[RMDB]
RNA sequence: GGGAACGACUCGAGUAGAGUCGAAAAGGGGACGUUACGGAUUCGACAGGCACAGUCGAGCUUGAAUUGCGUUUCGUAGGUUACGUCUACGUAAAAACGUUACAGUUAAAUAUAACUGCUAAAAACGAAAACAACUCUUACGCUUUAGCUGCCUAAACAUCGGAGGAUCCUUCGGGAUCCUCCGAUGAAAAGAAACAACAACAACAAC
Reactivity to 2A3 in 0.01 (KOAc 150mM, MgCl2 10mM, bicine 150mM(pH8.5), 24C), signal-to-noise 1, nucleotides 027 to 156: g010g030g020g000a000c020g040u070u080a010c040g050g000a070u080u020c010g020a000c050a020g030g000c040a100c000a020g010u030c040g030a030g000c020u070u020g110a060a040u240u040g010c080g010u060u070u010c020g000u030a040g060g060u080u030a010c080g010u070c030u010a010c010g000u020a020a030a000a000a000c000g000u000u000a010c000a000g010u040u060a050a300a000u200a120u060a140a020c000u020g000c000u100a040a050a090a090a000c080g030a030a020a000a000c050a010a110c040u040c050u120u070a020c000g020c010u040u000u080a000g020c040u050g020c000c000u080a180a070a000
Background: Structure probing data (2A3) for a 207-nucleotide construct. The data come from the RNA Mapping Database (RMDB), library ARCHII. 2A3 is a SHAPE reagent: it acylates the 2'-hydroxyl of flexible nucleotides of all four kinds. 2A3 adducts were read by reverse transcription with SuperScript II with manganese. The 2A3 profile rests on 627 reads. Reactivities are rounded to 0.1 and cut off at 0 and 3.